An RNA of 177 nucleotides, treated with DMS and 2A3 and read out base by base.

[RMDB]
RNA sequence: GGGAACGACUCGAGUAGAGUCGAAAAGGAACCAGAUCGGCAAAGGACGGGCCGGAGUGUCGGAAGAGCUUUAGUGCGACCAUGCCCGUCUCCUCAGAACUUGCGCCACGGUGUCGAGGUGGGCCGGCGCAGUAGCGGAGUUCGCUCCGCUACUGCGAAAAGAAACAACAACAACAAC
Reactivity to DMS in 0.01 (KOAc 150mM, MgCl2 10mM, bicine 150mM(pH8.5), 24C), signal-to-noise 1, nucleotides 027 to 126: g000g000a160a090c060c000a190g030a010u030c010g000g010c000a030a200a180g010g010a030c000g000g010g000c020c200g000g010a140g020u050g030u000c140g000g050a100a030g040a160g050c070u000u030u040a130g090u000g000c000g000a160c040c000a060u000g040c060c000c070g000u000c000u010c090c010u000c020a110g000a060a040c110u000u060g000c040g000c040c190a000c030g000g010u000g000u030c090g000a050g000g050u010g000g000g040c040c080g010g000
Reactivity to 2A3 in 0.01 (KOAc 150mM, MgCl2 10mM, bicine 150mM(pH8.5), 24C), signal-to-noise 3, nucleotides 027 to 126: g080g010a000a020c000c040a050g000a080u070c040g000g020c020a070a070a050g040g030a010c000g010g000g060c050c050g060g080a190g070u300g030u000c010g040g080a170a030g000a060g050c020u210u230u110a250g080u190g210c000g000a030c000c020a050u110g000c010c000c000g030u000c020u020c000c000u010c000a050g030a160a090c010u070u070g040c030g070c090c010a070c140g030g000u050g040u050c060g010a020g080g000u130g010g040g040c000c000g030g000
Values cover nucleotides 27 to 126.